[RMDB]
RNA sequence: GGGAACGACUCGAGUAGAGUCGAAAAGCCACAUAUCCCGUGACAUUGCGAAAGCAAGGCUGGCGGUAUGUAGUCCUGGGCGGCGACAGCCUUGGACUGCGGCGUAAAGGUGUACCUGGGGCCGUUAUAACGCGGUAACAGUUCGCUGUUACCGCAAGUAAAUUGAUGUGUUCGCACAUCAAUUUACAAAAGAAACAACAACAACAAC
Reactivity to 2A3 in 0.01 (KOAc 150mM, MgCl2 10mM, bicine 150mM(pH8.5), 24C), signal-to-noise 2, nucleotides 027 to 156: g030c000c000a020c000a010u060a020u020c010c000c000g030u030g070a080c100a200u020u050g020c020g050a120a030a020g000c010a010a020g030g020c040u040g030g000c050g030g000u030a030u040g050u040a010g010u000c000c000u010g010g000g000c010g020g050c080g070a070c100a030g010c000c000u000u010g010g010a010c000u010g000c020g020g000c020g010u080a070a050a020g010g030u110g050u110a130c030c000u020g010g000g090g000c010c010g000u030u050a130u050a140a080c110g010c000g000g000u020a000a000c000a000g060u090u090c170g050c100u010g010u000u000a010c010c000g000c000a000a000
Reactivity to DMS in 0.01 (KOAc 150mM, MgCl2 10mM, bicine 150mM(pH8.5), 24C), signal-to-noise 1, nucleotides 027 to 156: g020c020c020a200c020a050u010a040u000c010c030c000g000u000g010a080c040a180u010u000g000c000g030a140a130a230g050c010a030a050g010g050c000u000g010g050c040g000g000u000a040u000g020u000a020g020u000c000c000u000g010g020g000c000g000g020c050g010a090c110a140g000c000c010u000u020g020g000a010c020u010g080c030g000g050c020g000u000a060a060a100g000g000u010g010u000a150c080c010u000g010g010g020g020c030c020g030u000u000a080u010a060a190c180g020c010g030g040u000a000a000c010a020g040u000u000c240g040c000u000g010u010u000a000c000c000g000c000a010a040